Structure probing data (2A3 and DMS) for a 177-nucleotide construct. For DMS the reverse transcriptase was MarathonRT. It was measured as part of the RMDB library OK2TRN. The reactions ran in a buffer of 150 mM KOAc, 10 mM MgCl2 and 150 mM bicine (pH 8.5), at 24 C.
[RMDB]
RNA sequence: GGGAACGACUCGAGUAGAGUCGAAAACGCGCAGGGAUGUUUUCGAAUCUAUGUUUAUGCUCUCCCUUUGAGUGAUUCACACUUACGAGCAUGGAUUCGCAUAGAUAGGCGUCUCAAAGGGAGCGCGAUAGCGUCCCACUUUCGAGUGGGACGCUAUAAAAGAAACAACAACAACAAC
Reactivity to 2A3 in 0.01 (KOAc 150mM, MgCl2 10mM, bicine 150mM(pH8.5), 24C), signal-to-noise 2, nucleotides 027 to 126: c030g050c020g000c100a110g130g030g070a100u040g070u030u090u080u120c020g020a010a020u000c010u030a050u060g100u060u150u020a110u180g020c000u000c000u030c000c000c000u000u010u010g020a010g000u110g110a190u120u170c060a060c000a000c120u090u180a080c120g050a010g010c030a050u060g030g030a130u040u060c000g000c030a020u070a060g120a050u070a090g080g000c010g020u020c000u000c000a010a000a010g020g010g010a030g010c010g000c010g010
Reactivity to DMS in 0.01 (KOAc 150mM, MgCl2 10mM, bicine 150mM(pH8.5), 24C), signal-to-noise 4, nucleotides 027 to 126: c070g020c080g030c110a080g010g000g000a100u010g000u000u000u000u000c020g010a050a050u000c020u000a030u010g010u000u000u000a070u020g010c020u000c000u000c010c010c010u010u000u000g000a020g000u010g010a130u000u010c110a110c120a070c090u010u010a050c130g000a020g000c040a160u000g020g000a120u000u010c060g010c120a050u000a040g010a130u010a110g010g000c030g030u010c000u000c000a010a020a020g000g000g010a020g020c090g010c010g020